Chemical mapping of a 177-nucleotide RNA with 2A3 and DMS. Conditions: 150 mM KOAc, 10 mM MgCl2 and 150 mM bicine (pH 8.5), 24 C. DMS adducts were read by reverse transcription with MarathonRT. Source: RMDB library TTRDEL, as collected in RNAgym.
[RMDB]
RNA sequence: GGGAACGACUCGAGUAGAGUCGAAAAGAUAUGGACGAGCGAUAAGUCGAUGUCGGAAACGACAUUCGACUUUUGACGCUCAGUCCUAAGUCAAACCUUACUAAUGCGUUCGCGCAUUAGUAAGGAAUCGUUGGGUAUAGUUCGCUAUACCCAACGAAAAAGAAACAACAACAACAAC
Reactivity to 2A3 in 0.01 (KOAc 150mM, MgCl2 10mM, bicine 150mM(pH8.5), 24C), signal-to-noise 2, nucleotides 027 to 126: g010a000u050a030u070g000g010a000c000g000a020g000c020g060a070u010a180a020g000u000c010g010a000u010g010u000c000g000g060a080a030a020c000g000a010c000a000u090u090c010g000a000c020u000u000u020u030g020a020c010g000c000u000c010a010g000u000c000c010u020a110a010g050u000c060a090a020a190c010c000u000u010a010c000u010a010a000u020g030c000g050u020u090c300g000c000g000c230a000u000u010a000g000u000a000a000g010g010a000a100
Reactivity to DMS in 0.01 (KOAc 150mM, MgCl2 10mM, bicine 150mM(pH8.5), 24C), signal-to-noise 3, nucleotides 027 to 126: g000a040u000a250u000g010g010a000c020g000a000g020c000g000a160u010a030a020g020u000c000g000a010u000g000u000c000g000g000a080a070a160c010g010a000c000a010u010u000c000g000a010c010u010u000u010u000g010a210c090g020c000u000c000a080g020u000c000c000u000a050a080g000u000c030a110a090a210c000c010u000u000a010c000u010a000a000u000g010c010g030u010u010c200g010c020g010c000a000u010u000a000g000u000a000a000g010g020a010a010